Source information
The data come from the RNA Mapping Database (RMDB), library OK2TST. The record gives the reactivity of an RNA of 177 nucleotides to DMS and 2A3. The 2A3 profile rests on 2,590 reads. The RNA was probed in 150 mM KOAc, 10 mM MgCl2 and 150 mM bicine (pH 8.5) at 24 C.

RNA sequence: GGGAACGACUCGAGUAGAGUCGAAAACCGGGAGCUUGGCAUCGGGCCUGAUCAGCCAGGACGCGUAGGACAAGUCGAUCGAAUGCAUAGUGGCCUCCAGAGUGGCCGUGCCACUUCCGGCGUGCUCAGCUUCCCUUUAUUUCGAUAAAGGGAAGCUAAAAGAAACAACAACAACAAC
Reactivity to DMS in 0.01 (KOAc 150mM, MgCl2 10mM, bicine 150mM(pH8.5), 24C), signal-to-noise 3, nucleotides 027 to 126: c000c000g010g020g020a020g030c190u010u010g050g050c000a030u010c090g040g010g010c010c000u010g010a090u010c190a180g020c040c010a050g010g020a170c290g010c040g010u000a120g000g010a080c070a130a150g010u010c190g010a090u000c020g000a210a070u000g020c040a040u000a230g000u000g010g010c000c050u010c110c120a120g000a090g010u000g000g010c000c060g030u000g030c000c010a020c000u000u010c000c020g000g010c000g000u000g000c000u000c020
Reactivity to 2A3 in 0.01 (KOAc 150mM, MgCl2 10mM, bicine 150mM(pH8.5), 24C), signal-to-noise 3, nucleotides 027 to 126: c010c000g020g000g030a050g030c300u270u200g040g000c030a050u160c160g090g080g040c020c000u050g040a150u090c030a010g010c000c000a020g030g010a040c050g000c010g050u040a070g000g120a020c080a160a090g230u130c050g120a270u050c040g050a150a060u100g000c000a020u030a100g120u030g030g010c010c000u050c090c020a030g050a030g110u090g050g000c000c000g000u010g000c000c000a000c000u000u010c000c000g000g000c010g020u040g000c000u030c040